[RMDB]
RNA sequence: GGGAACGACUCGAGUAGAGUCGAAAAUGGUUAGGAAGGUGGGCUUUAGCCUCAGUCCGUCCACCUGCUUCUCUGAGUGACCUUGGGCAAGCUAAUUAGCCUUUCUGGCCUGCAGUCUCCUCAUACACUUAUGGCAUGAUAAUUAAAUGAAUUACCAGUAAGAUCGCAAAUUCGUUUGCGAUCUUACAAAAGAAACAACAACAACAAC
Reactivity to 2A3 in 0.01 (KOAc 150mM, MgCl2 10mM, bicine 150mM(pH8.5), 24C), signal-to-noise 4, nucleotides 027 to 156: u090g000g000u020u000a020g020g010a030a020g040g040u110g020g060g020c010u050u080u160a020g000c000c010u060c020a010g020u070c060c050g010u080c090c030a020c000c010u050g070c090u190u160c110u020c060u060g100a120g050u060g010a030c000c000u040u080g000g000g000c010a050a000g000c000u040a160a250u190u120a180g000c000c000u010u010u000c010u010g000g010c010c020u020g000c010a020g070u020c020u050c080c010u050c010a070u110a050c050a020c070u210u120a070u170g060g000c040a030u040g040a040u110a160a050u220u190a140a110a090u050g090a030a050u060u000a060c000c010a010
Reactivity to DMS in 0.01 (KOAc 150mM, MgCl2 10mM, bicine 150mM(pH8.5), 24C), signal-to-noise 1, nucleotides 027 to 156: u020g010g030u010u010a040g030g000a010a020g040g000u010g000g040g050c010u000u000u010a040g010c000c000u010c220a080g040u010c070c030g000u000c030c010a020c030c020u000g000c110u000u020c130u010c130u000g020a070g030u000g010a050c040c010u000u020g010g040g000c000a090a110g010c040u020a070a160u010u000a280g040c010c010u000u000u000c030u000g030g000c000c020u020g040c100a130g020u000c010u010c040c050u000c000a120u000a110c050a070c090u010u000a090u010g030g010c070a110u020g020a080u000a090a120u030u000a040a080a170u000g010a170a110u000u000a090c040c030a220
Background
Chemical mapping of a 207-nucleotide RNA with 2A3 and DMS. For DMS, 2,351 sequencing reads were counted. For 2A3 the reverse transcriptase was SuperScript II with manganese. Values cover nucleotides 27 to 156. For 2A3, 2,321 sequencing reads were counted.